[RMDB]
RNA sequence: GGGAACGACUCGAGUAGAGUCGAAAAGCUAUGAUGAUGUACUUAGCAGGGGUGCCAACAUUCACAAUAAUGCUGAUUGGUCGAUGGGCAUUCGACGCCUUUUUGAGCUACAUCGAAAAACAGGUACAGCGCCAUAUGUAUUCGUACAUAUGGCGCUAAAAGAAACAACAACAACAAC
Reactivity to 2A3 in 0.01 (KOAc 150mM, MgCl2 10mM, bicine 150mM(pH8.5), 24C), signal-to-noise 1, nucleotides 027 to 126: g010c010u000a010u130g010a050u020g000a030u060g100u010a020c010u060u080a020g000c020a020g070g050g000g030u020g000c030c000a060a000c000a110u070u100c050a040c020a100a180u250a110a100u110g100c050u020g030a070u060u020g100g050u030c070g000a050u050g050g070g000c060a050u050u020c050g020a060c060g100c020c040u090u220u000u020u300g060a000g040c000u020a010c020a040u110c040g050a070a000a000a020a000c120a030g080g000u060a110c000
Reactivity to DMS in 0.01 (KOAc 150mM, MgCl2 10mM, bicine 150mM(pH8.5), 24C), signal-to-noise 1, nucleotides 027 to 126: g020c030u000a070u020g010a140u000g020a020u000g040u000a100c030u000u000a070g050c130a110g000g010g040g000u000g030c010c030a000a150c030a030u000u000c080a070c110a050a070u010a160a080u010g040c180u000g000a070u010u000g000g010u000c080g010a040u000g010g020g060c060a070u020u000c020g020a190c070g040c020c110u000u010u000u020u000g000a070g020c230u000a070c030a030u000c000g010a030a050a080a080a120c170a020g000g030u010a080c240
Structure probing data (2A3 and DMS) for a 177-nucleotide construct. For 2A3 the reverse transcriptase was SuperScript II with manganese. The RNA was probed in 150 mM KOAc, 10 mM MgCl2 and 150 mM bicine (pH 8.5) at 24 C.